[RMDB]
RNA sequence: GGGAACGACUCGAGUAGAGUCGAAAACGCGUAUAAUAGGCUAUUGCUGUAAAAACGAUCCGUGUCGGUGAGUUGCGCGACAUUUACAGCAUCGCCAACGAAAGCAGUACUAAAGUUUAUGUCGAGAUCGUUGGGUAUAUUUUCGAUCGCGUAUGCGACAUUCCCUGCCCUUCGGGGCAGGGAAUGUAAAAGAAACAACAACAACAAC
Reactivity to 2A3 in 0.01 (KOAc 150mM, MgCl2 10mM, bicine 150mM(pH8.5), 24C), signal-to-noise 1, nucleotides 027 to 156: c020g040c000g060u130a010u020a140a160u130a200g040g000c020u010a010u050u200g010c040u020g010u000a000a030a010a000a030c090g020a020u110c080c000g090u100g070u100c060g060g060u080g160a200g020u000u190g100c050g000c000g000a000c000a030u010u000u000a010c000a000g040c020a000u020c030g000c000c000a000a070c070g000a020a060a000g070c040a020g080u090a060c050u160a100a140a020g010u110u240u020a100u070g100u140c010g000a000g030a130u050c040g040u040u000g040g010g090u030a080u040a030u120u090u030u020c050g020a050u020c020g050c010g000u230a120u190g120c040g010
Structure probing data (2A3) for a 207-nucleotide construct. The data come from the RNA Mapping Database (RMDB), library OK3TST. The 2A3 profile rests on 543 reads.